[RMDB]
RNA sequence: GGGAACGACUCGAGUAGAGUCGAAAAUAUUAGGGUGUGAGAGAAUCUCUCUCCCAGCCGGUUCGCGCAGCCAUCUUUUUCGACUUUACUUGGGUUAGCUGCGCGAACUGGCUGGCGUUCCCAGCAACGAAGAUGUGUGAUUCGUCACACAUCUUCGAAAAGAAACAACAACAACAAC
Reactivity to 2A3 in 0.01 (KOAc 150mM, MgCl2 10mM, bicine 150mM(pH8.5), 24C), signal-to-noise 2, nucleotides 027 to 126: u100a030u080u130a040g010g010g010u000g000u010g030a010g000a010g070a300a300u060c030u010c000u000c000u000c090c000c010a000g010c000c010g020g000u000u000c010g000c000g000c000a000g030c020c050a120u100c110u060u150u030u050u080c030g030a020c040u140u170u250a080c050u140u150g060g000g020u010u020a010g020c010u000g000c000g000c000g000a000a000c000u000g000g000c000u000g000g000c000g010u000u010c000c000c010a020g080c020a000a120
Reactivity to DMS in 0.01 (KOAc 150mM, MgCl2 10mM, bicine 150mM(pH8.5), 24C), signal-to-noise 1, nucleotides 027 to 126: u000a040u010u000a250g010g000g020u000g000u010g000a010g000a050g020a130a160u000c080u000c010u010c010u000c030c000c000a020g010c020c010g000g000u000u010c020g010c010g030c000a020g020c000c130a040u000c010u000u000u000u000u000c050g020a040c050u020u010u000a050c130u010u000g010g000g020u010u000a020g020c000u000g000c010g010c020g000a010a010c000u000g000g010c000u000g010g000c000g010u000u000c000c000c000a200g010c230a060a110